[RMDB]
RNA sequence: GGGAACGACUCGAGUAGAGUCGAAAAGCACCAGAUCUAUGUAGCUAUUCGGUCGCAUCAUCUGGUGAUGUGCAGCCGAACCGUAAAAACUUGGAUAGGUGGCGCCCAUGCCAUAGGCGGCAGCUGCCGCCACGCAGGCCUUCGGGCCUGCGUGGCGAAAAGAAACAACAACAACAAC
Reactivity to 2A3 in 0.01 (KOAc 150mM, MgCl2 10mM, bicine 150mM(pH8.5), 24C), signal-to-noise 2, nucleotides 027 to 126: g130c000a050c000c000a020g040a110u000c070u080a040u010g110u010a180g000c000u030a040u020u140c020g030g010u080c090g000c000a050u030c000a000u050c150u300g080g000u030g110a010u000g000u030g070c110a020g040c000c000g030a020a020c050c110g010u130a000a030a130a190a150c050u070u160g000g040a000u060a120g000g000u000g130g130c000g020c030c020c010a040u130g040c080c000a130u140a230g080g020c010g000g010c000a020g000c070u100g000c020